[RMDB]
Structure probing data (2A3) for a 207-nucleotide construct. It was measured as part of the RMDB library OK3TST. The RNA was probed in 150 mM KOAc, 10 mM MgCl2 and 150 mM bicine (pH 8.5) at 24 C.

RNA sequence: GGGAACGACUCGAGUAGAGUCGAAAAUGCUUGACUCGGCUAGCCAAUGCGCAAGGCAACAGCUGUGACAGGAAUUAGUAGGCAGGUUGACCCAUACUGAUUGGCUCCAUGUAUCACACCAAUUGCAGUACGCUGACUUCAUCCCUAAAGGGGCAGCGAGACCACAGACAUUCGUGUCUGUGGUCUCAAAAGAAACAACAACAACAAC
Reactivity to 2A3 in 0.01 (KOAc 150mM, MgCl2 10mM, bicine 150mM(pH8.5), 24C), signal-to-noise 1, nucleotides 027 to 156: u040g000c000u010u000g010a000c030u040c000g040g020c030u040a010g020c030c040a030a010u300g090c120g000c140a120a190g050g000c030a060a070c000a080g020c010u010g020u030g010a080c000a010g000g180a130a040u120u060a090g070u010a050g090g000c040a020g190g070u000u140g010a130c010c020c010a000u020a070c050u040g120a120u030u060g030g000c020u000c010c020a050u070g130u120a050u090c050a090c010a060c140c070a060a050u000u090g000c020a010g020u070a000c110g010c010u000g000a030c000u050u020c090a020u080c010c000c000u070a050a070a040g060g000g000g000c020a030g050c060